Conditions: 150 mM KOAc, 10 mM MgCl2 and 150 mM bicine (pH 8.5), 24 C. Structure probing data (DMS and 2A3) for a 177-nucleotide construct. The 2A3 profile rests on 1,129 reads.
RNA sequence: GGGAACGACUCGAGUAGAGUCGAAAACGGACGCUGCCUGGUACUACCGCCGGCCCAGUCCACUGGCUCGCCGGAUCAAAAACCAUGUUGCGUUCUGGCACGGUGUGACGGUCGAAGGUGAAUCCGACUCUCCCAAGGUGUUCGCACCUUGGGAGAGAAAAGAAACAACAACAACAAC
Reactivity to DMS in 0.01 (KOAc 150mM, MgCl2 10mM, bicine 150mM(pH8.5), 24C), signal-to-noise 1, nucleotides 027 to 126: c130g000g000a040c050g010c030u000g020c000c000u070g000g020u020a160c110u010a110c110c070g000c180c020g000g000c020c040c190a060g000u000c020c160a000c000u000g000g050c260u010c150g000c000c000g030g080a100u030c020a080a090a120a070a000c080c200a060u000g020u000u020g000c300g010u000u000c020u000g000g010c020a090c030g010g000u000g000u000g000a010c030g000g000u000c010g020a110a160g010g030u000g010a110a110u000c020c000g020a160
Reactivity to 2A3 in 0.01 (KOAc 150mM, MgCl2 10mM, bicine 150mM(pH8.5), 24C), signal-to-noise 1, nucleotides 027 to 126: c000g020g000a010c000g010c060u060g060c000c020u000g020g060u110a160c060u050a030c020c070g000c000c000g000g000c010c030c010a030g050u020c030c010a070c010u020g020g090c030u010c060g000c020c000g000g050a030u000c080a030a150a050a040a000c080c080a220u270g060u020u030g060c070g000u010u000c000u050g040g000c010a010c040g040g050u080g020u170g050a020c010g040g000u080c030g040a050a020g030g040u030g030a020a030u030c030c000g080a080